[RMDB]
RNA sequence: GGGAACGACUCGAGUAGAGUCGAAAAUCCUAAGUCAGCUUUUGACGCGACCGGGGUGAGACAUGAAAUGUCGGAAACGACAUUUCAACAGCUCACAAGGUCGCGAUAAGCUGAUAUGGAAAACCUCGUGUUCUUAGUUCGCUAAGAACACGAGGAACCUGUCCUGUACGUUCGCGUACAGGACAGGAAAAGAAACAACAACAACAAC
Reactivity to 2A3 in 0.01 (KOAc 150mM, MgCl2 10mM, bicine 150mM(pH8.5), 24C), signal-to-noise 2, nucleotides 027 to 156: u000c000c000u030a100a050g020u000c000a010g000c000u060u090u130u170g170a110c010g000c000g010a010c000c000g000g030g290g030u000g000a030g030a050c030a060u030g000a000a000a000u000g000u000c000g030g040a040a080a020c010g000a000c000a000u010u000u010c000a000a020c030a010g020c000u010c000a010c000a020a050g010g010u000c000g000c010g020a000u000a000a000g000c000u010g000a010u020a060u060g050g030a060a040a090a170c000c000u000c020g010u000g000u000u000c000u000u010a030g000u040u050c260g020c160u000a000a000g000a000a000c000a000c000g000a010g000g010a010a000
The data come from the RNA Mapping Database (RMDB), library RNAMAK. Structure probing data (2A3) for a 207-nucleotide construct. Values cover nucleotides 27 to 156. 2A3 adducts were read by reverse transcription with SuperScript II with manganese. The RNA was probed in 150 mM KOAc, 10 mM MgCl2 and 150 mM bicine (pH 8.5) at 24 C.